[RMDB]
RNA sequence: GGGAACGACUCGAGUAGAGUCGAAAAAGCCGAGGACUACGGUCCUCGGCAACAACCGUCACAACGGCUUCCUGGCGUGACGGGGUUAACCCCAACGCAGCAAGUGCGAGCUUACGAGCUCGCACAAUUUAGGAGAAUUCCUUCGGGAAUUCUCCAAUCUUAACAUAGAGUUCGCUCUAUGUUAAGAAAAAGAAACAACAACAACAAC
Reactivity to 2A3 in 0.01 (KOAc 150mM, MgCl2 10mM, bicine 150mM(pH8.5), 24C), signal-to-noise 1, nucleotides 027 to 156: a000g000c020c000g010a000g000g030a000c000u010a020c280g090g010u020c000c020u000c000g010g060c000a020a000c000a000a000c000c000g010u020c060a020c000a170a050c030g020g000c020u110u060c020c020u080g070g000c050g000u050g070a070c020g000g000g020g030u240u160a160a160c010c010c010c010a040a040c080g030c060a070g110c090a170a080g020u000g000c020g010a000g010c010u040u070a070c170g120a000g020c000u030c060g000c000a000c000a020a000u000u070u200a020g000g000a010g010a000a000u010u000c030c010u020u070c210g110g000g000a000a000u000u000c000u010c000c000a000a000
This 207-nucleotide RNA was probed chemically with 2A3. It was measured as part of the RMDB library M2RFPK. Values cover nucleotides 27 to 156. The 2A3 profile rests on 537 reads. The reactions ran in a buffer of 150 mM KOAc, 10 mM MgCl2 and 150 mM bicine (pH 8.5), at 24 C.